[RMDB]
RNA sequence: GGGAACGACUCGAGUAGAGUCGAAAAUAGAACAUCCUGAUGUCUCUGGUGUUUGUAAAUAUAAGGGUAAGUUUGUCCAAAUCCCUGCUCAGUGUGUCCGUGACCCUGUGGGAUUUUGUUUGUCAAAUAGCCUGAGAGUUCGCUCUCAGGAAAAGAAACAACAACAACAAC
Reactivity to 2A3 in 0.01 (KOAc 150mM, MgCl2 10mM, bicine 150mM(pH8.5), 24C), signal-to-noise 5, nucleotides 027 to 129: u190a010g130a020a010c010a050u050c000c020u060g040a060u060g110u020c010u020c020u080g000g000u010g040u020u070u070g050u030a050a090a050u180a000u040a080a080g020g000g000u020a010a060g080u050u120u130g050u000c030c000a010a000a020u030c010c010c000u020g000c060u080c010a010g010u010g020u030g040u150c070c090g090u070g030a030c000c000c000u030g010u060g000g030g020a030u000u010u040u040g060u030u050u080g040u020c000a000a000a060u030a040g030
Reactivity to DMS in 0.01 (KOAc 150mM, MgCl2 10mM, bicine 150mM(pH8.5), 24C), signal-to-noise 6, nucleotides 027 to 129: u000a120g030a090a080c120a090u020c030c040u050g020a050u030g000u000c060u040c020u030g010g010u000g000u020u020u030g000u050a030a060a070u030a110u000a070a080g010g030g030u030a030a030g040u010u000u000g030u000c070c080a040a070a090u020c020c010c010u020g020c080u030c050a000g000u000g040u000g020u010c020c130g030u040g030a040c020c020c000u030g050u030g010g010g020a060u000u000u000u000g030u000u070u000g000u000c000a040a080a080u040a140g020